[RMDB]
RNA sequence: GGGAACGACUCGAGUAGAGUCGAAAAGCUUUCAGUAAGGUAGGUAGCUAUGACAGUAUUGUCUUGGAUGAAGUCUUCGCAAUGAGUCCUGGAGUUCUGAUUUAUUAUCUCAUGAGUGCAAAGAAUACUUAUAUUUACCAUUCGUGGUAAAUAUAAGAAAAGAAACAACAACAACAAC
Reactivity to 2A3 in 0.01 (KOAc 150mM, MgCl2 10mM, bicine 150mM(pH8.5), 24C), signal-to-noise 8, nucleotides 027 to 126: g020c020u040u090u050c020a040g030u070a130a020g020g050u050a010g020g050u020a020g010c020u040a040u130g030a020c020a020g100u120a160u140u130g030u020c000u020u050g050g010a050u040g060a080a040g010u000c020u050u050c070g000c040a050a150u090g010a040g040u010c000c000u020g040g020a040g010u070u030c020u020g040a030u000u110u060a110u070u050a040u030c020u010c030a040u090g060a030g100u080g010c030a060a080a040g060a180a040u070a090
Reactivity to DMS in 0.01 (KOAc 150mM, MgCl2 10mM, bicine 150mM(pH8.5), 24C), signal-to-noise 9, nucleotides 027 to 126: g000c060u000u010u000c050a070g020u010a070a080g010g010u000a040g020g010u000a050g020c050u000a060u010g010a060c040a050g020u010a060u010u010g010u000c020u000u000g000g010a090u000g010a080a100g010u000c030u000u000c080g020c070a080a070u000g000a140g010u000c030c030u000g010g010a090g010u000u000c050u000g000a090u000u010u000a060u010u000a070u000c020u000c040a080u010g010a090g020u000g010c100a060a070a110g000a090a080u010a130
The record gives the reactivity of an RNA of 177 nucleotides to 2A3 and DMS.
2A3 adducts were read by reverse transcription with SuperScript II with manganese.
It was measured as part of the RMDB library OK2TRN.
For DMS, 32,690 sequencing reads were counted.